[RMDB]
RNA sequence: GGGAACGACUCGAGUAGAGUCGAAAAACGGGCACGUUCGCGUGCCCGUAAUGAACGCUGCAACGCCCAGAGAUCUCGCGAGAGCGCGAAUGCACAAAGAAACAUUUCCAGUUUUCGAACUGGAAAACACAUGCAUUCUAUUCGUAGAAUGCAUGUGAAAAGAAACAACAACAACAAC
Reactivity to 2A3 in 0.01 (KOAc 150mM, MgCl2 10mM, bicine 150mM(pH8.5), 24C), signal-to-noise 4, nucleotides 027 to 126: a000c000g010g000g010c010a010c010g030u070u070c210g020c020g070u010g000c010c000c000g000u010a000a000u020g010a030a010c050g000c090u070g000c020a040a080c030g020c000c010c000a020g000a010g010a100u050c030u030c050g030c020g020a080g030a040g160c040g000c010g040a060a030u120g010c050a020c030a070a110a050g140a050a150a010c020a060u010u000u000c010c000a000g000u000u000u040u100c120g040a010a000c000u000g000g000a010a000a000a000
Reactivity to DMS in 0.01 (KOAc 150mM, MgCl2 10mM, bicine 150mM(pH8.5), 24C), signal-to-noise 7, nucleotides 027 to 126: a030c010g010g000g030c000a000c000g020u000u020c200g020c020g070u000g010c000c000c000g010u000a000a050u010g010a100a110c120g010c060u000g010c070a070a090c070g000c020c010c040a120g000a140g010a120u000c050u010c030g000c060g000a170g010a120g010c050g020c060g000a040a070u010g010c050a080c150a050a100a120g000a070a060a090c270a130u000u000u000c000c000a020g000u010u000u010u020c180g010a020a010c000u000g010g000a000a000a030a150

Source information: The data come from the RNA Mapping Database (RMDB), library M2PK50. This 177-nucleotide RNA was probed chemically with 2A3 and DMS. Values cover nucleotides 27 to 126. For 2A3, 9,201 sequencing reads were counted. As a SHAPE reagent, 2A3 marks flexible, mostly unpaired nucleotides at the ribose 2'-OH. Conditions: 150 mM KOAc, 10 mM MgCl2 and 150 mM bicine (pH 8.5), 24 C. 2A3 adducts were read by reverse transcription with SuperScript II with manganese.